[RMDB]
RNA sequence: GGGAACGACUCGAGUAGAGUCGAAAAGCGUCGAUGCUAGGGAAUAAAGCGGAAACGCGUAUACACACGAACUCUCUCAGACCUAGCAUCGAUAGAUGAGAGAGAAGGUGUGGAGAUAAAAUAAAAAGGGAUUUGAUUAGUUCGCUAAUCAAAUCCCAAAAGAAACAACAACAACAAC
Reactivity to DMS in 0.01 (KOAc 150mM, MgCl2 10mM, bicine 150mM(pH8.5), 24C), signal-to-noise 1, nucleotides 027 to 126: g000c020g000u030c020g060a000u000g000c010u000a050g000g010g180a130a060u040a000a100a030g010c010g010g000a030a080a140c040g010c000g000u040a010u120a080c020a000c000a000c010g010a050a020c000u000c000u000c000u040c000a210g000a230c010c000u000a000g000c040a000u000c020g020a000u040a030g010a150u000g000a000g010a010g000a040g010a030a060g010g000u000g000u010g000g040a160g080a080u090a040a050a090a000u040a040a080a020a180a280
Reactivity to 2A3 in 0.01 (KOAc 150mM, MgCl2 10mM, bicine 150mM(pH8.5), 24C), signal-to-noise 3, nucleotides 027 to 126: g080c010g060u040c000g000a000u000g000c000u000a000g020g010g190a090a120u260a300a250a020g000c010g060g010a000a000a080c010g000c000g060u010a080u100a090c000a000c000a000c010g080a300a050c100u000c000u000c000u000c020a110g080a250c000c000u010a000g050c020a030u020c010g000a000u020a000g050a020u060g010a000g000a000g000a020g030a120a230g020g000u010g000u020g080g010a080g050a090u250a030a180a040a000u200a010a040a020a010a010

An RNA of 177 nucleotides, treated with DMS and 2A3 and read out base by base.
For 2A3, 1,884 sequencing reads were counted.
The reactions ran in a buffer of 150 mM KOAc, 10 mM MgCl2 and 150 mM bicine (pH 8.5), at 24 C.